Source: RMDB library VIROID, as collected in RNAgym.
An RNA of 207 nucleotides, treated with DMS and 2A3 and read out base by base.
DMS adducts were read by reverse transcription with MarathonRT.
The RNA was probed in 150 mM KOAc, 10 mM MgCl2 and 150 mM bicine (pH 8.5) at 24 C.
RNA sequence: GGGAACGACUCGAGUAGAGUCGAAAAAUAGAAAGGCUAAGCACCUCGCAAUGAGGUAAGGUGGGACUUUUCCUUCAGGAACCAAGCGGUUGGUUCCGAGGGGGGUGUGAUCCAGGUACCGCCGUAGAAACUGGAUUACGACGUCUACCCGGGAUUCGAAUCUACGCAAGUUCGCUUGCGUAGAUUCAAAAGAAACAACAACAACAAC
Reactivity to DMS in 0.01 (KOAc 150mM, MgCl2 10mM, bicine 150mM(pH8.5), 24C), signal-to-noise 1, nucleotides 027 to 156: a110u000a040g020a050a000a030g000g010c000u000a040a220g030c060a100c030c000u020c100g000c160a270a140u000g030a070g020g040u010a010a020g020g070u000g040g030g030a150c130u000u000u020u030c000c030u010u000c070a140g000g010a030a010c000c000a050a080g000c180g000g040u000u000g080g010u000u000c000c040g000a040g000g010g030g000g010g000u020g000u030g000a050u000c000c030a050g010g030u000a140c090c040g020c030c190g000u010a130g000a040a090a180c010u000g000g000a070u000u020a140c010g000a100c000g010u000c040u000a030c030c000c010g020g000g010a300u020u000c080
Reactivity to 2A3 in 0.01 (KOAc 150mM, MgCl2 10mM, bicine 150mM(pH8.5), 24C), signal-to-noise 2, nucleotides 027 to 156: a000u130a000g040a010a020a000g020g000c010u010a030a000g030c020a030c010c030u070c070g160c160a170a270u290g010a000g020g000u040a060a000g030g000u020g000g020g000a040c020u010u060u050u050c030c000u060u000c080a070g010g000a000a000c000c000a000a000g090c020g190g000u060u040g000g000u000u000c000c000g010a020g000g020g020g000g000g030u100g000u020g030a020u000c010c000a010g000g000u010a020c000c050g030c000c000g080u090a060g020a060a200a000c010u010g010g000a010u000u020a030c040g030a030c040g030u000c010u020a030c000c000c020g080g000g000a110u180u150c050